[RMDB]
RNA sequence: GGGAACGACUCGAGUAGAGUCGAAAAUAUUUAUCUGAAUUUCUCACAGCUGGAUUUCAGUGUAUUUAGUGCGUUGAUGAUGGAUAUUCGACGCAUUGAUGGAGUGACUGAUGUCCGCACCGUCUCCGCCCAACUACUGAUUCGUCAGUAGUUGGGCAAAAGAAACAACAACAACAAC
Reactivity to DMS in 0.01 (KOAc 150mM, MgCl2 10mM, bicine 150mM(pH8.5), 24C), signal-to-noise 1, nucleotides 027 to 126: u010a090u030u020u000a080u000c090u000g000a010a060u000u000u000c030u000c040a130c300a220g000c040u000g030g000a050u000u000u000c010a020g020u000g010u000a080u010u010u000a070g040u000g020c020g010u000u000g010a050u000g020a240u010g030g030a140u020a100u000u000c010g000a010c000g040c000a000u020u010g010a040u000g010g050a150g060u010g000a040c010u000g030a040u000g030u010c010c030g000c010a090c210c090g010u000c040u010c060c300
Reactivity to 2A3 in 0.01 (KOAc 150mM, MgCl2 10mM, bicine 150mM(pH8.5), 24C), signal-to-noise 1, nucleotides 027 to 126: u100a010u130u250u090a130u070c080u100g050a120a080u000u020u060c020u000c000a100c010a050g060c110u220g000g000a020u030u010u000c010a000g000u000g080u140a070u020u060u040a000g000u000g000c000g000u010u000g000a010u010g030a060u140g300g050a010u050a120u160u010c000g000a000c000g000c060a010u010u010g010a020u030g040g110a130g050u150g080a010c000u010g040a010u040g000u020c010c000g010c000a020c000c060g110u090c060u020c010c040